Structure probing data (DMS and 2A3) for a 177-nucleotide construct. Reactivities are given for positions 27 through 126. 2A3 adducts were read by reverse transcription with SuperScript II with manganese. DMS adducts were read by reverse transcription with MarathonRT. For 2A3, 2,632 sequencing reads were counted.
[RMDB]
RNA sequence: GGGAACGACUCGAGUAGAGUCGAAAAGAUAUGGACCCUCCAGCUUUUGACGGACCACACAUCGGAAACGAUGUGGGUCCGAUAAGCUGCGAGGGUCCUAAGUCAAAGGGCCUGUUCGCAGGCCCAACAUCACAUUAGCGUUCGCGCUAAUGUGAUGAAAAGAAACAACAACAACAAC
Reactivity to DMS in 0.01 (KOAc 150mM, MgCl2 10mM, bicine 150mM(pH8.5), 24C), signal-to-noise 3, nucleotides 027 to 126: g010a090u000a300u000g010g000a000c010c000c000u010c010c000a010g000c000u000u000u020u010g040a300c210g010g000a010c000c000a160c010a010c000a000u020c000g020g010a130a100a240c010g020a000u000g020u000g010g000g030u010c000c000g010a010u000a020a020g010c000u000g010c190g010a010g020g010g000u000c000c010u000a000a050g000u000c040a070a190a220g000g010g000c010c000u000g000u000u010c190g030c000a020g000g010c010c000c020a020a080
Reactivity to 2A3 in 0.01 (KOAc 150mM, MgCl2 10mM, bicine 150mM(pH8.5), 24C), signal-to-noise 1, nucleotides 027 to 126: g030a000u080a040u100g010g020a020c020c000c020u000c000c010a000g030c050u080u090u220u300g240a200c110g020g030a000c010c020a110c010a010c000a300u010c010g000g100a040a050a040c000g000a000u030g010u030g000g000g000u040c020c000g000a000u000a000a010g000c000u000g000c050g000a000g020g010g000u000c000c000u010a010a010g000u000c000a030a050a060g000g000g020c020c030u000g020u050u090c290g000c110a020g000g000c000c010c000a000a000